[RMDB]
RNA sequence: GGGAACGACUCGAGUAGAGUCGAAAAUGUGACAUGUUCGCAUGUCACAAGCCAGGUAGUUCCUAUCUCAAUUACCUGUACACGCCAUGGUCUGGAUAGGAAAGCUCUACCUAUUCGUAGGUAGAAAUGUUUUCCAUGGAUUCGUCCAUGGAAAACAAAAAGAAACAACAACAACAAC
Reactivity to DMS in 0.01 (KOAc 150mM, MgCl2 10mM, bicine 150mM(pH8.5), 24C), signal-to-noise 2, nucleotides 027 to 126: u000g030u000g000a000c000a000u000g020u000u010c280g020c010a000u000g000u000c000a010c000a020a100g000c180c010a060g010g020u000a050g020u000u000c040c020u010a050u010c080u020c110a090a060u000u000a020c010c000u000g000u000a130c130a180c120g010c170c010a080u010g020g010u000c160u010g040g010a010u010a040g000g000a050a080a120g010c100u000c020u000a010c000c000u000a040u000u000c110g020u000a000g000g010u020a020g010a030a090a090
Reactivity to 2A3 in 0.01 (KOAc 150mM, MgCl2 10mM, bicine 150mM(pH8.5), 24C), signal-to-noise 2, nucleotides 027 to 126: u120g010u000g000a000c010a010u000g020u070u080c260g000c140a000u000g000u000c000a000c000a000a000g050c000c010a020g000g070u030a040g030u020u040c040c040u070a100u050c090u040c050a090a200u140u050a010c010c000u010g010u090a030c080a020c160g090c050c030a070u090g010g050u050c060u060g000g000a010u050a020g020g000a000a030a000g040c010u000c000u020a000c000c000u000a000u000u070c260g070u000a010g000g020u010a000g030a030a120a040